[RMDB]
RNA sequence: GGGAACGACUCGAGUAGAGUCGAAAAUUCCGCCCCAAGGGGAGCCGAGUGAGGCUUAUCCCGGGGAACUCGGUAAUUCGCCCCGAAAUGAGGACUCCGGGGUCCCCUUCCGAAGGAACGGAGGGGGUAACGCGCAUCUUCGGAUGCGCGAAAAGAAACAACAACAACAAC
Reactivity to DMS in 0.01 (KOAc 150mM, MgCl2 10mM, bicine 150mM(pH8.5), 24C), signal-to-noise 4, nucleotides 027 to 129: u000u000c050c000g010c100c020c000c080a210a150g020g030g000g060a090g030c000c000g010a070g050u040g000a160g040g050c030u010u070a020u010c010c000c030g100g000g010g000a090a050c020u010c010g000g040u120a120a220u070u010c010g040c060c000c010c010g000a040a110a000u020g000a020g000g000a140c000u040c000c000g010g000g000g020u040c020c000c000c000u000u000c000c010g030a270a150g050g050a170a090c020g000g030a000g010g010g040g000g010u030a020a090
Reactivity to 2A3 in 0.01 (KOAc 150mM, MgCl2 10mM, bicine 150mM(pH8.5), 24C), signal-to-noise 4, nucleotides 027 to 129: u070u010c010c020g030c000c000c000c000a090a100g010g060g000g020a020g000c030c000g030a110g160u190g080a070g030g000c000u000u020a050u020c000c030c000g000g000g000g000a000a000c010u020c020g030g030u090a080a110u200u050c060g010c000c040c000c030g080a060a040a150u150g020a010g020g090a040c020u000c000c010g000g000g010g010u040c000c000c000c010u000u000c010c000g060a120a070g170g090a090a040c010g000g000a000g020g010g000g000g000u000a000a000